[RMDB]
RNA sequence: GGGAACGACUCGAGUAGAGUCGAAAAACCUGUCGUCGUCGACGAAGGCUGGUAAGCCGUGACGCGUGGAGGAGAGCCCGGGUCGCGCUCUUGGGGGUAACCCCUUUGAGACUUGACCGGUUCCUCUCUAGAUUAAUGAGUUCGCUCAUUAAUCUAGAAAAGAAACAACAACAACAAC
Reactivity to 2A3 in 0.01 (KOAc 150mM, MgCl2 10mM, bicine 150mM(pH8.5), 24C), signal-to-noise 3, nucleotides 027 to 126: a000c010c000u060g090u030c030g020u020c000g010u020c010g030a110c090g080a200a060g020g000c030u080g070g300u270a100a030g000c010c030g000u040g020a010c020g030c030g060u100g070g030a010g000g030a070g010a040g070c020c030c040g010g060g020u060c030g020c030g020c110u010c000u000u020g030g020g000g000g040u070a090a140c010c000c020c000u010u030u040g000a010g000a080c010u140u100g000a040c020c000g020g030u020u000c000c000u020c000u000
Reactivity to DMS in 0.01 (KOAc 150mM, MgCl2 10mM, bicine 150mM(pH8.5), 24C), signal-to-noise 4, nucleotides 027 to 126: a060c010c000u010g010u000c020g020u010c020g010u000c030g020a100c120g010a120a120g010g010c010u000g000g020u020a080a040g010c010c000g000u010g000a020c020g010c140g020u010g000g010a050g000g010a050g010a090g020c240c010c020g010g020g010u000c010g030c300g000c000u000c010u000u000g010g000g010g010g000u030a130a130c030c000c000c000u000u000u000g010a020g000a080c040u000u010g000a050c010c000g010g010u010u000c070c000u000c070u000